[RMDB]
RNA sequence: GGGAACGACUCGAGUAGAGUCGAAAAGAUAUGGAAUUAUCAGCAACAGCUACCGGGUCGGAAACGACCCGUAGACAUGCUGAUAAUUCCUAAGUCAAAACCGUGGAGGCGUUCGCGCCUCCACGGACACUAUUUACAUCUUCGGAUGUAAAUAGUGAAAAGAAACAACAACAACAAC
Reactivity to DMS in 0.01 (KOAc 150mM, MgCl2 10mM, bicine 150mM(pH8.5), 24C), signal-to-noise 3, nucleotides 027 to 126: g010a020u000a060u020g000g000a020a000u000u000a000u000c000a000g000c000a130a140c300a180g000c010u000a000c130c200g020g010g020u000c010g030g000a020a010a040c000g010a010c000c000c000g010u000a000g000a060c100a080u000g000c000u000g000a000u000a010a010u000u000c000c000u000a000a040g000u010c010a160a080a120a180c000c000g010u010g000g010a010g020g010c020g040u000u020c210g010c030g010c000c000u010c000c000a010c000g000g010a050
Reactivity to 2A3 in 0.01 (KOAc 150mM, MgCl2 10mM, bicine 150mM(pH8.5), 24C), signal-to-noise 3, nucleotides 027 to 126: g000a000u010a000u040g000g000a000a010u010u010a000u030c000a020g030c040a060a300c080a300g020c020u010a000c110c300g010g000g020u000c000g010g010a020a010a000c000g020a000c030c040c010g000u010a000g010a020c020a070u300g000c010u010g000a000u010a000a000u000u000c000c000u000a000a010g010u000c010a020a010a100a130c010c020g050u020g010g000a000g020g070c100g050u150u260c300g160c010g010c150c020u010c010c000a000c020g000g010a000